Conditions: 150 mM KOAc, 10 mM MgCl2 and 150 mM bicine (pH 8.5), 24 C. This 177-nucleotide RNA was probed chemically with DMS and 2A3. The 2A3 profile rests on 7,680 reads.

RNA sequence: GGGAACGACUCGAGUAGAGUCGAAAAGAUAUGGAUAGGCCAUACCAGCUAUGAAGACGAUCGGAAACGAUCGUUGGAGCUGAUGGAACUACCUAUCCUAAGUCAAAUCGGAUCUUCGGAUCCGAAACUAUCUUGACAGGUUCGCCUGUCAAGAUAGAAAAGAAACAACAACAACAAC
Reactivity to DMS in 0.01 (KOAc 150mM, MgCl2 10mM, bicine 150mM(pH8.5), 24C), signal-to-noise 4, nucleotides 027 to 126: g010a030u000a300u010g010g000a000u000a020g000g030c000c040a090u000a160c300c040a000g000c020u000a240u010g010a200a190g000a010c000g020a010u000c000g000g000a070a130a140c010g000a000u000c000g000u000u000g000g010a010g010c000u010g040a060u000g000g000a140a130c130u010a300c000c010u000a000u000c000c000u000a030a100g010u010c040a060a110a170u000c010g000g030a010u000c000u010u020c230g000g000a010u000c000c000g010a000a040a180
Reactivity to 2A3 in 0.01 (KOAc 150mM, MgCl2 10mM, bicine 150mM(pH8.5), 24C), signal-to-noise 4, nucleotides 027 to 126: g020a000u040a030u120g000g010a000u010a010g020g000c040c000a020u080a300c170c040a040g000c010u100a230u300g010a020a000g020a010c000g000a010u000c010g010g030a030a050a030c000g000a000u000c000g000u000u000g010g020a000g000c010u040g050a020u030g020g010a110a100c080u170a130c220c000u010a000u000c010c010u000a080a010g050u010c040a020a030a220u040c000g000g000a010u000c000u090u070c300g130g020a010u000c000c000g010a000a000a000
DMS adducts were read by reverse transcription with MarathonRT. Source: RMDB library TTRDES, as collected in RNAgym.